Structure probing data (2A3 and DMS) for a 177-nucleotide construct. Source: RMDB library TTRDES, as collected in RNAgym. High 2A3 reactivity points to a flexible backbone, as in loops and unpaired stretches. For 2A3 the reverse transcriptase was SuperScript II with manganese. The DMS profile rests on 1,695 reads.
[RMDB]
RNA sequence: GGGAACGACUCGAGUAGAGUCGAAAAGAUAUGGAGCUCUGCACUUUUGACGAUUAGUAUUGGUCGGAAACGACCAAUAGAUCGAUAAGUGCGAGCUCCUAAGUCAAAAGGCAGGUUCGCCUGCCAACCAUGGUUUAUGCUUCGGCAUAAACCAUGGAAAAGAAACAACAACAACAAC
Reactivity to 2A3 in 0.01 (KOAc 150mM, MgCl2 10mM, bicine 150mM(pH8.5), 24C), signal-to-noise 2, nucleotides 027 to 126: g020a000u080a020u120g000g000a010g010c000u040c200u300g000c220a030c020u130u020u200u300g300a080c030g030a040u080u050a040g180u040a020u010u000g020g000u000c050g050g000a120a140a090c020g000a000c010c010a010a000u000a010g000a000u010c020g050a050u000a150a000g010u000g000c020g000a010g000c000u010c000c000u000a000a000g000u000c000a050a050a040a060g000g000c000a000g030g000u020u300c290g150c080c000u000g010c000c010a010a000
Reactivity to DMS in 0.01 (KOAc 150mM, MgCl2 10mM, bicine 150mM(pH8.5), 24C), signal-to-noise 2, nucleotides 027 to 126: g000a070u000a300u010g000g010a010g000c000u010c000u020g070c000a010c000u000u000u000u000g000a300c100g010a010u010u000a100g020u020a000u000u000g000g000u010c010g000g010a060a120a290c010g000a010c000c000a000a000u000a050g000a020u000c000g000a110u000a010a000g030u000g000c010g000a000g000c000u010c000c000u000a020a040g010u010c020a050a080a130a150g010g010c000a020g020g000u000u000c300g010c000c000u000g000c000c020a020a110